[RMDB]
RNA sequence: GGGAACGACUCGAGUAGAGUCGAAAACAGCUUAAGUUCUAUGACGCAGGCACGACAACCCCUCGCCCUGUGUACGGCGAUAGCGGAUUGGCCGUGAACAACGGUGUUGCGGUUCGGCUGGAUAGCUCAGGUCGCCCCGACGUGGAUAUCUGGGGGCACCAGUAGACUUAUUCGUAAGUCUACUGGUAAAAGAAACAACAACAACAAC
Reactivity to DMS in 0.01 (KOAc 150mM, MgCl2 10mM, bicine 150mM(pH8.5), 24C), signal-to-noise 2, nucleotides 027 to 156: c060a090g000c030u020u000a090a150g000u000u010c070u000a100u000g010a100c030g010c040a040g020g050c050a040c020g020a080c050a070a120c000c020c050c040u000c020g010c100c010c020u000g000u010g030u000a070c060g000g020c000g000a090u000a030g030c070g100g020a150u010u000g020g000c020c000g030u000g040a040a090c040a070a070c050g000g020u000g000u000u000g000c030g000g010u000u000c030g010g000c040u000g000g060a150u000a110g000c040u000c040a060g050g010u000c030g000c050c010c000c040g020a070c050g040u000g030g010a120u000a050u000c020u010g000g000g010g020g040c130
Reactivity to 2A3 in 0.01 (KOAc 150mM, MgCl2 10mM, bicine 150mM(pH8.5), 24C), signal-to-noise 4, nucleotides 027 to 156: c020a010g060c040u150u210a140a040g030u120u050c050u070a100u170g050a020c020g020c040a040g000g000c030a000c120g100a040c050a050a120c010c010c000c020u020c010g000c000c010c010u100g040u060g050u200a050c000g020g020c020g020a050u110a040g050c080g000g070a080u060u070g060g000c040c000g010u050g050a030a050c060a070a030c070g020g030u050g020u100u040g000c030g000g000u020u050c020g010g000c040u030g010g070a150u110a090g000c010u010c070a020g000g040u060c020g040c000c000c010c000g050a050c050g080u110g020g040a110u060a060u190c040u100g010g000g000g000g000c000